[RMDB]
Background: The record gives the reactivity of an RNA of 207 nucleotides to 2A3 and DMS. 2A3 adducts were read by reverse transcription with SuperScript II with manganese. It was measured as part of the RMDB library RNAMAK. Values cover nucleotides 27 to 156. The RNA was probed in 150 mM KOAc, 10 mM MgCl2 and 150 mM bicine (pH 8.5) at 24 C.

RNA sequence: GGGAACGACUCGAGUAGAGUCGAAAAAUCCCUUUCGAGGGAUCAUGGGAUAUGGAGAAAUUCCCACAGACAUGAAGGAGUACGAUUCGGAAACGAAUUGAAACUUCAACAGCUGUGGGAGAUUUCUCCUAAGUCGGACGUCGCACUUCGGUGCGAAACCGGGUAUAGUUUUCGAACUAUACCCGGUAAAAGAAACAACAACAACAAC
Reactivity to 2A3 in 0.01 (KOAc 150mM, MgCl2 10mM, bicine 150mM(pH8.5), 24C), signal-to-noise 2, nucleotides 027 to 156: a000u040c030c000c060u020u060u070c300g050a030g000g060g000a030u040c060a120u260g090g110g040a050u040a080u150g000g000a000g020a010a000a000u030u020c000c030c000a000c000a000g090a040c010a090u120g020a030a010g000g000a020g020u000a030c120g010a000u000u000c000g010g040a070a140a060c010g000a000a000u040u010g010a050a010a030c000u030u000c020a050a010c030a040g040c000u000g010u000g000g050g000a000g000a000u000u000u000c000u050c000c000u000a010a000g020u000c020g010g070a020c050g170u180c000g000c010a000c000u040u130c260g100g000u000g100c000g000a020a110
Reactivity to DMS in 0.01 (KOAc 150mM, MgCl2 10mM, bicine 150mM(pH8.5), 24C), signal-to-noise 1, nucleotides 027 to 156: a020u000c000c000c040u020u010u000c170g130a010g020g020g000a010u000c030a080u020g000g020g010a100u000a250u000g000g000a010g030a010a010a000u000u000c030c000c010a030c040a030g000a060c010a300u000g010a040a190g000g020a090g080u000a200c160g030a020u000u000c000g000g010a140a090a300c010g020a020a010u000u000g010a120a160a150c020u000u000c010a020a220c040a200g010c030u000g050u000g000g010g010a050g000a030u000u000u000c000u000c000c030u000a000a090g010u000c030g000g010a150c060g000u000c000g010c000a000c000u000u000c250g000g000u000g000c010g000a010a020